[RMDB]
RNA sequence: GGGAACGACUCGAGUAGAGUCGAAAACGUCAAGGAUUCGUCCUUGACGAAAGUCGCGGCUUGAGGGCGUAUUCGGCUGCGCACACACACGACCCUCAAGCCAAACAGGUGGAUUCGUCCACCUGAAGAAAAACUGUGGUUUCGACCACAGUUUUUCAAAAGAAACAACAACAACAAC
Reactivity to 2A3 in 0.01 (KOAc 150mM, MgCl2 10mM, bicine 150mM(pH8.5), 24C), signal-to-noise 1, nucleotides 027 to 126: c000g010u000c000a000a000g040g000a030u100u100c230g030u020c040c000u000u000g000a000c000g020a000a010a000g070u060c020g030c130g080g000c000u010u000g000a010g000g020g000c000g000u040a090u010u130c080g050g000c030u110g020c120g050c040a050c010a010c000a000c000a000c050g300a300c000c000c000u010c000a000a000g000c010c030a000a020a010c010a000g000g000u010g010g010a010u010u050c210g010u060c030c000a000c000c000u010g000a080a130
Reactivity to DMS in 0.01 (KOAc 150mM, MgCl2 10mM, bicine 150mM(pH8.5), 24C), signal-to-noise 2, nucleotides 027 to 126: c010g000u000c000a000a000g000g000a000u000u010c300g050u000c000c000u000u010g000a010c000g010a010a040a080g010u000c060g020c300g010g000c010u000u000g010a020g010g000g000c010g000u010a050u000u000c170g010g000c090u010g000c070g000c100a070c040a030c150a080c070a050c040g020a120c000c000c010u000c000a000a010g010c000c020a020a040a170c000a020g000g000u000g010g000a040u010u000c140g030u000c000c000a000c000c000u000g000a040a070